[RMDB]
RNA sequence: GGGAACGACUCGAGUAGAGUCGAAAACAUCGCCACCCCGCCCGCGUUCGAUCCCUGCGGGCACUCCGUCCCCCCGGCGAUGGGCUCCGUGACUGGGCGAGCAGACACGGCGCGCAGGCCGAUUUUCCGGAAGUCAUAAGUUCGCUUAUGACUUCCGAAAAGAAACAACAACAACAAC
Reactivity to DMS in 0.01 (KOAc 150mM, MgCl2 10mM, bicine 150mM(pH8.5), 24C), signal-to-noise 1, nucleotides 027 to 126: c020a040u010c060g020c010c020a190c040c000c020c110g090c040c000c000g020c020g010u010u030c070g000a160u000c000c030c050u030g020c030g010g000g010c050a090c020u010c010c020g000u000c000c000c010c000c040c000g010g000c030g010a050u000g020g010g000c020u000c000c080g010u010g000a120c000u000g000g000g000c050g000a080g010c020a050g040a090c020a050c000g000g010c050g000c070g000c010a020g000g030c010c030g010a110u020u000u000u000c030
Reactivity to 2A3 in 0.01 (KOAc 150mM, MgCl2 10mM, bicine 150mM(pH8.5), 24C), signal-to-noise 4, nucleotides 027 to 126: c020a040u080c050g020c030c010a030c010c000c010c020g010c010c010c000g000c020g070u160u120c070g060a140u050c010c000c000u010g000c020g000g000g020c020a010c020u010c000c000g050u040c000c000c000c010c030c010g000g000c020g070a120u010g020g060g020c010u000c020c010g030u010g040a050c000u020g000g060g100c060g020a100g060c020a000g020a010c010a000c010g000g000c000g000c010g050c030a010g040g000c000c000g030a060u020u010u020u030c030
Source: RMDB library RFM100, as collected in RNAgym. Structure probing data (DMS and 2A3) for a 177-nucleotide construct. The 2A3 profile rests on 4,543 reads. DMS adducts were read by reverse transcription with MarathonRT. The RNA was probed in 150 mM KOAc, 10 mM MgCl2 and 150 mM bicine (pH 8.5) at 24 C. 2A3 adducts were read by reverse transcription with SuperScript II with manganese. Values cover nucleotides 27 to 126.